Structure probing data (DMS and 2A3) for a 207-nucleotide construct. For 2A3, 1,278 sequencing reads were counted. DMS (dimethyl sulfate) methylates the pairing face of unpaired adenines and cytosines. 2A3 adducts were read by reverse transcription with SuperScript II with manganese. The RNA was probed in 150 mM KOAc, 10 mM MgCl2 and 150 mM bicine (pH 8.5) at 24 C.

RNA sequence: GGGAACGACUCGAGUAGAGUCGAAAAAAUUCAAGAUAUGUUCCGGCAGGAUAUGAUUGCGCACCAAAGUCUGUUAACAAUAAUCCGCUUGUCCCUGGGAAUAUAUUCACACCUAAGAAACCACUCCCAUCUUGUGGAUUCUCGCCAAGACGGACUGCACAUCCAGAGUAUUCGUACUCUGGAUGUGAAAAGAAACAACAACAACAAC
Reactivity to DMS in 0.01 (KOAc 150mM, MgCl2 10mM, bicine 150mM(pH8.5), 24C), signal-to-noise 1, nucleotides 027 to 156: a050a060u010u000c060a070a150g030a040u010a040u000g000u010u000c030c040g000g010c060a150g000g010a060u000a050u000g000a110u000u000g020c020g000c060a160c030c040a030a100a090g000u000c030u010g010u010u000a110a040c040a090a030u010a140a090u000c020c010g020c040u000u000g020u000c050c030c010u000g010g070g000a050a070u010a050u000a070u000u010c100a080c040a100c110c050u000a080a100g000a050a050a060c120c010a050c060u000c020c010c010a090u010c020u000u030g050u000g000g010a110u000u000c040u000c080g020c040c040a030a090g010a030c050g000g020a040c030u020g000
Reactivity to 2A3 in 0.01 (KOAc 150mM, MgCl2 10mM, bicine 150mM(pH8.5), 24C), signal-to-noise 1, nucleotides 027 to 156: a000a010u250u170c070a080a000g020a010u060a010u130g020u000u040c030c000g040g020c060a030g010g020a060u080a060u130g090a070u140u110g040c050g030c030a050c050c050a090a040a030g010u020c050u090g050u080u060a090a030c020a020a010u130a090a080u040c020c020g040c070u050u080g060u040c080c030c020u000g040g000g000a030a000u040a010u010a030u070u100c040a070c000a030c100c060u100a130a040g030a050a110a010c060c020a020c060u070c010c020c000a050u020c030u060u080g010u010g020g010a010u060u020c060u030c040g020c040c000a010a020g060a050c070g010g020a020c050u110g000